Notes:
Conditions: 150 mM KOAc, 10 mM MgCl2 and 150 mM bicine (pH 8.5), 24 C. The record gives the reactivity of an RNA of 207 nucleotides to DMS and 2A3. The 2A3 profile rests on 987 reads. DMS adducts were read by reverse transcription with MarathonRT. High 2A3 reactivity points to a flexible backbone, as in loops and unpaired stretches.
RNA sequence: GGGAACGACUCGAGUAGAGUCGAAAAGCCAGUCAGAGGGCGCUACCAUGCAAACUAGGGCUGGCUACUCUUGCACAGAAUCACCUUUCUAUAAUAACCAGUGCAAGAGGGGUUAUUAUACCAUUUAAAAAUCGUGAAUGCUUCGGCAUUCACGAAAUCUAAGCAAGCAGUUCGCUGCUUGCUUAGAAAAAGAAACAACAACAACAAC
Reactivity to DMS in 0.01 (KOAc 150mM, MgCl2 10mM, bicine 150mM(pH8.5), 24C), signal-to-noise 1, nucleotides 027 to 156: g020c000c000a000g020u000c050a090g040a110g000g010g030c300g010c050u000a040c170c170a090u000g010c070a080a300a150c030u000a150g080g000g000c010u020g040g030c010u000a000c000u010c010u000u000g010c010a050c000a150g000a160a180u030c140a090c070c040u000u010u000c070u000a150u000a040a090u020a040a040c000c020a300g000u020g000c000a040a070g010a020g010g000g030g010u000u000a010u000u000a040u010a100c040c040a220u030u000u000a050a130a120a120a110u000c010g030u000g000a000a000u000g000c010u000u000c270g020g000c030a000u000u000c000a000c000g000a000a040a030
Reactivity to 2A3 in 0.01 (KOAc 150mM, MgCl2 10mM, bicine 150mM(pH8.5), 24C), signal-to-noise 2, nucleotides 027 to 156: g000c000c000a000g000u000c000a000g000a000g040g010g010c020g000c000u160a300c070c120a130u300g000c000a040a030a030c000u000a000g000g020g000c000u010g000g000c000u020a020c000u010c000u010u050g000c020a020c010a040g140a120a130u140c010a170c060c000u070u220u110c080u110a090u010a180a040u020a030a070c030c040a040g010u000g010c000a000a000g010a000g000g000g010g010u050u010a080u100u020a040u060a040c050c000a020u090u230u300a050a070a020a020a050u030c000g000u000g000a000a000u010g000c010u020u020c170g070g010c010a000u000u000c010a000c000g010a000a000a010